[RMDB]
RNA sequence: GGGAACGACUCGAGUAGAGUCGAAAAUCGCGCUCUUGGAGGAAACUCCUUUGAGACUUGACCGGCGAGCCUUCUCCUGCAGAGCAUACCUGCCGCUAGUCGAGCGGACAACUGGCAGCUCUCCGACCCUCAGAAUUUCUCUUCAGGCCGGGCGGGGCCAUUCUACAUUGUUCGCAAUGUAGAAUGGAAAAGAAACAACAACAACAAC
Reactivity to 2A3 in 0.01 (KOAc 150mM, MgCl2 10mM, bicine 150mM(pH8.5), 24C), signal-to-noise 3, nucleotides 027 to 156: u100c020g010c010g000c030u020c020u010u030g010g010a020g000g020a080a090a080c010u050c000c000u040u030u070g020a020g000a020c040u110u150g090a060c020c030g040g010c010g000a010g030c010c020u080u050c030u030c010c020u040g020c090a010g000a020g020c020a040u160a230c000c010u030g030c000c000g000c010u020a050g100u210c070g090a020g030c020g010g030a060c050a130a050c170u030g030g000c020a030g010c020u000c000u010c010c030g110a200c030c010c000u070c050a030g040a110a120u060u170u030c060u030c000u120u090c050a040g000g070c020c010g030g000g000c010g000g000g010g000
Reactivity to DMS in 0.01 (KOAc 150mM, MgCl2 10mM, bicine 150mM(pH8.5), 24C), signal-to-noise 2, nucleotides 027 to 156: u010c060g030c070g030c010u000c020u000u000g010g010a060g040g010a180a170a250c000u000c010c010u010u000u010g010a130g010a070c040u000u000g010a100c070c030g040g050c020g010a060g030c000c050u010u000c110u000c010c030u020g040c080a100g000a060g030c070a130u000a080c020c030u000g030c000c030g000c010u000a060g020u000c140g010a170g010c040g010g020a110c020a090a110c050u010g000g030c000a130g030c030u010c040u000c020c010g030a030c040c020c050u000c060a090g020a100a210u010u000u000c070u000c040u000u010c090a110g030g010c020c010g020g000g040c060g010g010g030g010

Record summary: Chemical mapping of a 207-nucleotide RNA with 2A3 and DMS. It was measured as part of the RMDB library VIROID. The DMS profile rests on 3,776 reads. Values cover nucleotides 27 to 156. Conditions: 150 mM KOAc, 10 mM MgCl2 and 150 mM bicine (pH 8.5), 24 C. For DMS the reverse transcriptase was MarathonRT.